[RMDB]
RNA sequence: GGGAACGACUCGAGUAGAGUCGAAAAGCAGUCGGCAAUGAUUUUUACUGCGGCAACAAGGCAUUUGUAUGCAUUUCCAUGGGCAAUAUUUUGAUCGGUAGCUGCCAACCAACCGCAGAGCUAUCCACGCAUACCUGAUAUUCGUAUCAGGUAUGCGAAAAGAAACAACAACAACAAC
Reactivity to DMS in 0.01 (KOAc 150mM, MgCl2 10mM, bicine 150mM(pH8.5), 24C), signal-to-noise 3, nucleotides 027 to 126: g060c020a010g000u030c040g000g010c130a090a070u030g010a030u010u010u040u020u020a140c030u000g010c020g000g000c130a070a100c120a080a080g000g030c070a030u010u020u050g070u020a060u010g010c020a080u020u010u000c080c020a050u040g020g010g000c030a060a090u030a070u030u020u020u020g000a050u030c050g010g020u010a040g030c030u000g000c000c010a080a140c120c110a080a150c060c000g020c030a000g000a100g030c000u010a080u020c030c110a250
Reactivity to 2A3 in 0.01 (KOAc 150mM, MgCl2 10mM, bicine 150mM(pH8.5), 24C), signal-to-noise 7, nucleotides 027 to 126: g050c030a010g060u090c030g060g040c080a070a090u130g120a170u060u020u050u100u150a030c020u020g010c000g020g010c000a040a050c040a070a100g100g000c030a070u050u080u170g120u140a090u080g000c040a030u030u050u000c020c020a050u070g020g020g000c030a060a040u050a130u160u160u080u130g100a070u050c030g000g010u010a000g010c010u000g020c020c020a030a030c020c000a020a020c020c010g010c010a010g000a010g040c000u030a010u080c010c000a040
About this RNA:
This 177-nucleotide RNA was probed chemically with DMS and 2A3. Conditions: 150 mM KOAc, 10 mM MgCl2 and 150 mM bicine (pH 8.5), 24 C. The DMS profile rests on 5,183 reads. Reactivities are given for positions 27 through 126.